An RNA of 207 nucleotides, treated with 2A3 and read out base by base. Source: RMDB library M2RFOK, as collected in RNAgym. 2A3 adducts were read by reverse transcription with SuperScript II with manganese.

[RMDB]
RNA sequence: GGGAACGACUCGAGUAGAGUCGAAAAAACGUUGCAUGAUCGUAAAACAUGCCCGGCUUACCGUGAGCCGCCUUUGAAAGAAAGGUUUACAUGGACUCUGUUGCGUUACGCACGUACCUAACUUGUGAAAACGGCAUCUUGUUCGCAAGAUGCCGAAGCAGGAAAUCUUCUUCGGAAGAUUUCCUGCAAAAGAAACAACAACAACAAC
Reactivity to 2A3 in 0.01 (KOAc 150mM, MgCl2 10mM, bicine 150mM(pH8.5), 24C), signal-to-noise 1, nucleotides 027 to 156: a000a000c010g000u000u000g000c000a000u000g030a020u210c010g060u200a040a040a040a040c000a000u020g000c010c010c000g000g040c000u000u080a100c010c020g020u020g010a000g000c000c000g010c040c000u030u010u000g120a140a080a000g030a000a000a000g020g000u000u090u070a030c020a020u040g030g010a140c010u040c050u190g200u200u030g010c010g010u020u070a040c130g030c000a010c000g030u040a040c000c000u070a160a200c110u050u120g050u060g170a030a040a030a030c010g000g010c000a000u010c000u000u000g030u090u020c110g040c140a000a000g000a000u000g000c000c000g000a000a000